[RMDB]
RNA sequence: GGGAACGACUCGAGUAGAGUCGAAAAGCGUACUACUAAGCUUUUGACGCUCCCUGACCAGACAACAGCGCUCCCAAAUAGGAGCGACAUGUCUGGGAUGGGAGCGAUAAGCUUAGUAUCGCAAACCCACUGUCAUAGUUCGCUAUGACAGUGGGAAUCUACGAGUGGGAUUCGUCCCACUCGUAGAAAAAGAAACAACAACAACAAC
Reactivity to DMS in 0.01 (KOAc 150mM, MgCl2 10mM, bicine 150mM(pH8.5), 24C), signal-to-noise 1, nucleotides 027 to 156: g020c010g040u000a030c260u000a070c000u000a040a030g010c000u000u000u020u000g000a200c010g030c020u000c000c020c010u020g010a300c000c000a000g030a040c000a050a080c090a300g060c000g030c000u000c000c000c000a090a180a300u030a030g000g000a040g010c010g000a040c090a300u000g010u000c030u020g000g020g000a170u000g000g010g000a010g030c000g010a000u000a010a050g000c000u000u000a000g000u010a010u000c030g040c010a050a030a130c000c000c000a010c030u000g050u000c000a000u030a010g010u000u000c260g040c000u000a010u000g010a000c000a010g110u000g000g000g010a020a000
Reactivity to 2A3 in 0.01 (KOAc 150mM, MgCl2 10mM, bicine 150mM(pH8.5), 24C), signal-to-noise 2, nucleotides 027 to 156: g000c010g030u120a050c040u000a000c000u000a020a000g010c010u040u090u030u110g200a110c010g000c000u000c000c000c000u000g170a010c000c010a000g010a010c010a100a020c060a180g050c030g030c020u050c000c060c020a130a300a130u300a110g000g000a000g000c020g010a020c010a020u030g000u000c000u000g000g000g000a020u050g000g000g000a000g000c000g000a000u000a000a000g010c000u000u000a000g000u000a010u030c020g000c010a050a070a180c000c000c000a010c000u010g000u000c000a000u000a000g000u040u120c150g040c130u000a000u010g020a000c000a010g000u000g000g000g000a020a060
Source: RMDB library RNAMAK, as collected in RNAgym. This 207-nucleotide RNA was probed chemically with DMS and 2A3. 2A3 adducts were read by reverse transcription with SuperScript II with manganese. DMS adducts were read by reverse transcription with MarathonRT. The reactions ran in a buffer of 150 mM KOAc, 10 mM MgCl2 and 150 mM bicine (pH 8.5), at 24 C.